[RMDB]
RNA sequence: GGGAACGACUCGAGUAGAGUCGAAAAGUACUUUAGGGUUCGCCCUAAAGUACACGGCAACCUUUGUGAUCCGACAGCAUCGAUCGGCCACCCAUUGGGUGGCGGGAGCUGGGGAUCACUCUGGUAAAUUCAGUGGUACAAUUCGUUGUACCACUAAAUAUCCGAUAAACUUCGGUUUAUCGGAUAUAAAAGAAACAACAACAACAAC
Reactivity to 2A3 in 0.01 (KOAc 150mM, MgCl2 10mM, bicine 150mM(pH8.5), 24C), signal-to-noise 5, nucleotides 027 to 156: g000u000a000c000u010u010u010a020g000g050g030u040u130c260g150c020c010c000u000a000a000a000g000u000a000c000a000c000g090g030c110a060a010c000c000u020u010u000g000u000g010a000u000c030c000g300a300c150a010g040c010a160u120c060g270a160u070c040g300g060c000c010a010c030c010c090a300u270u300g030g000g000u010g040g030c000g030g000g000a010g000c000u010g050g000g010g010a000u000c000a000c000u000c010u010g000g010u070a040a060a030u270u210c070a010g000u000g000g000u000a010c010a000a010u020u090c200g050u110u000g000u000a000c000c000a000c000u010a000a000
Reactivity to DMS in 0.01 (KOAc 150mM, MgCl2 10mM, bicine 150mM(pH8.5), 24C), signal-to-noise 2, nucleotides 027 to 156: g010u000a000c010u000u000u020a000g000g000g060u010u010c300g070c000c000c010u010a000a000a010g020u000a000c000a050c070g010g010c120a100a060c010c000u010u000u000g000u000g020a010u000c000c000g010a200c010a020g000c020a200u000c070g020a110u000c010g010g030c010c010a010c010c000c010a300u000u010g060g020g020u000g030g040c000g000g010g000a100g000c010u010g010g020g020g020a030u010c010a000c000u000c020u000g000g010u000a030a080a110u000u000c060a050g040u000g000g010u000a040c000a020a090u000u000c300g020u010u010g000u000a000c010c000a000c000u000a010a070
Structure probing data (2A3 and DMS) for a 207-nucleotide construct. DMS adducts were read by reverse transcription with MarathonRT. Reactivities are given for positions 27 through 156. The data come from the RNA Mapping Database (RMDB), library RNAMAK. For 2A3 the reverse transcriptase was SuperScript II with manganese. The RNA was probed in 150 mM KOAc, 10 mM MgCl2 and 150 mM bicine (pH 8.5) at 24 C.